Annotation:
Source: RMDB library OK1LIB, as collected in RNAgym. Chemical mapping of a 177-nucleotide RNA with 2A3. Reactivities are given for positions 27 through 126.
RNA sequence: GGGAACGACUCGAGUAGAGUCGAAAAUUGGCAUGUGGGUUGAGGAUGCACUCCAGGACUUGGAAGAUAUGGCAAUUGCUAUUGUUGAAAGCGGAAGCUUAAGUGAAGUAUGUGCCCUCCACACCUACGUCGCGAAGACUUUCGAGUCUUCGCGACGAAAAGAAACAACAACAACAAC
Reactivity to 2A3 in 0.01 (KOAc 150mM, MgCl2 10mM, bicine 150mM(pH8.5), 24C), signal-to-noise 1, nucleotides 027 to 126: u040u000g070g010c120a040u140g000u070g000g080g030u000u000g040a040g050g000a090u190g000c190a000c070u030c000c000a000g000g300a210c110u020u160g040g050a000a000g020a070u000a070u070g050g040c000a020a020u040u160g000c000u040a000u110u250g230u000u000g050a260a000a000g090c080g040g050a160a000g090c050u000u090a140a000g000u000g210a030a030g070u090a040u300g000u090g070c000c000c000u100c130c000a060c000a000c090c000u090a020

Conditions: 150 mM KOAc, 10 mM MgCl2 and 150 mM bicine (pH 8.5), 24 C.